[RMDB]
RNA sequence: GGGAACGACUCGAGUAGAGUCGAAAAGUGGUGCGCGGAGAGGGUAACCACCGGCGCGCCUCACUGAUAUAUCCACCGGGGGGUAAGGGGAGAAAAGGAUACAGCGCGACGAAGUUAGCACGCUGCCGAAAUGUACCCACAUUCGUGUGGGUACAAACUUUACCAAUAGCUUCGGCUAUUGGUAAAGAAAAGAAACAACAACAACAAC
Reactivity to 2A3 in 0.01 (KOAc 150mM, MgCl2 10mM, bicine 150mM(pH8.5), 24C), signal-to-noise 1, nucleotides 027 to 156: g020u020g000g000u010g030c020g010c010g110g110a220g010a020g090g060g000u050a080a170c050c040a050c010c010g070g050c010g000c010g000c010c020u010c000a020c000u020g080a010u040a000u000a050u240c040c030a070c000c030g020g000g000g000g020g020u070a020a000g050g020g010g010a060g050a000a070a010a020g040g000a010u070a170c070a020g000c030g020c020g110a040c020g010a160a010g010u040u030a040g080c070a030c140g050c010u100g040c000c010g050a140a090a000u010g000u020a020c000c040c000a000c000a020u100u080c150g050u000g000u000g010g040g000u000a000c010a000a000a000
Reactivity to DMS in 0.01 (KOAc 150mM, MgCl2 10mM, bicine 150mM(pH8.5), 24C), signal-to-noise 1, nucleotides 027 to 156: g000u010g020g010u000g050c010g030c060g040g040a170g000a090g030g040g000u000a090a200c100c080a140c020c000g000g000c010g030c000g010c050c000u000c010a010c050u000g010a210u010a100u000a210u000c030c030a140c040c000g000g000g050g010g020g040u010a050a100g010g000g010g000a100g020a050a090a060a120g060g000a150u020a020c050a050g040c090g000c000g020a160c000g010a070a100g010u010u000a100g020c060a030c050g010c000u010g030c030c070g000a060a110a160u020g000u000a010c000c000c000a000c010a060u000u040c240g030u030g110u010g010g000g040u000a000c020a000a060a060